[RMDB]
RNA sequence: GGGAACGACUCGAGUAGAGUCGAAAAUGACGCCCUGGAUAAAUACCAGCAAUUGCUGGAAAAAGACCGCAUACUUAUCGUCAGCGGACAGGUCAGCUUUGAUGACUUCAGCGGUGGGCUUAAAAUGUCAAUAGUACGGCUUCGGCCGUACUAUUGAAAAAGAAACAACAACAACAAC
Reactivity to 2A3 in 0.01 (KOAc 150mM, MgCl2 10mM, bicine 150mM(pH8.5), 24C), signal-to-noise 2, nucleotides 027 to 126: u050g030a000c000g040c000c000c000u000g090g030a010u070a160a200a010u110a130c020c010a010g000c040a170a300u280u190g030c000u050g000g000a020a020a020a010a020g040a020c000c010g050c000a010u030a150c070u220u130a070u260c050g010u010c040a010g010c040g020g040a040c030a020g000g150u010c020a010g000c050u130u170u210g030a090u040g010a020c000u060u000c080a020g000c010g080g030u070g000g020g000c000u070u080a110a180a040a040u270g040
Reactivity to DMS in 0.01 (KOAc 150mM, MgCl2 10mM, bicine 150mM(pH8.5), 24C), signal-to-noise 2, nucleotides 027 to 126: u020g020a090c060g000c000c000c000u000g010g030a100u000a050a080a130u010a050c000c000a000g010c010a300a100u000u010g010c010u020g000g010a010a090a100a260a080g000a100c010c000g040c020a100u010a140c120u000u000a070u000c090g030u000c080a080g030c040g020g010a070c160a060g000g000u000c040a010g000c070u000u000u010g000a100u000g000a030c080u000u000c080a040g010c060g000g040u000g000g000g000c020u020u000a070a070a080a120u000g010
Chemical mapping of a 177-nucleotide RNA with 2A3 and DMS.
The data come from the RNA Mapping Database (RMDB), library OK2TST.
The DMS profile rests on 1,346 reads.
Reactivities are given for positions 27 through 126.